[RMDB]
RNA sequence: GGGAACGACUCGAGUAGAGUCGAAAACACCCCGCGUUCGCGCGGGGUGAAACAGGUAGUUGCUAUCUCAAUUACCUGAACAGGCCAUGCUCUGGAUAGCAAAAACUGAUGACUUCGGUCAUCAGAAUCUAUACUUGCUGUUCGCAGCAAGUAUAGAAAAAGAAACAACAACAACAAC
Reactivity to DMS in 0.01 (KOAc 150mM, MgCl2 10mM, bicine 150mM(pH8.5), 24C), signal-to-noise 3, nucleotides 027 to 126: c010a030c000c000c000c010g030c000g020u000u030c220g040c010g050c010g030g000g010g020u010g000a000a040a070c000a010g020g010u000a010g030u000u000g000c200u000a060u010c100u020c040a020a010u000u000a020c000c000u000g000a090a090c140a090g000g000c020c030a160u010g020c050u020c080u010g000g000a050u000a040g020c160a100a080a060a140a110c010u000g000a010u000g010a010c000u000u020c230g020g010u000c000a000u000c000a000g000a050a040
Reactivity to 2A3 in 0.01 (KOAc 150mM, MgCl2 10mM, bicine 150mM(pH8.5), 24C), signal-to-noise 3, nucleotides 027 to 126: c020a030c010c000c010c000g000c000g020u030u050c280g000c010g040c000g080g000g000g030u020g000a020a000a010c010a000g020g010u000a010g000u000u030g000c070u170a150u260c060u010c130a010a040u020u000a000c000c000u000g000a060a030c040a020g090g000c050c010a080u110g000c020u070c080u130g150g050a130u120a050g050c030a030a020a020a050a150c000u000g000a000u000g000a000c010u010u070c300g110g000u000c020a010u000c000a000g010a000a020

An RNA of 177 nucleotides, treated with DMS and 2A3 and read out base by base. The reactions ran in a buffer of 150 mM KOAc, 10 mM MgCl2 and 150 mM bicine (pH 8.5), at 24 C. DMS adducts were read by reverse transcription with MarathonRT.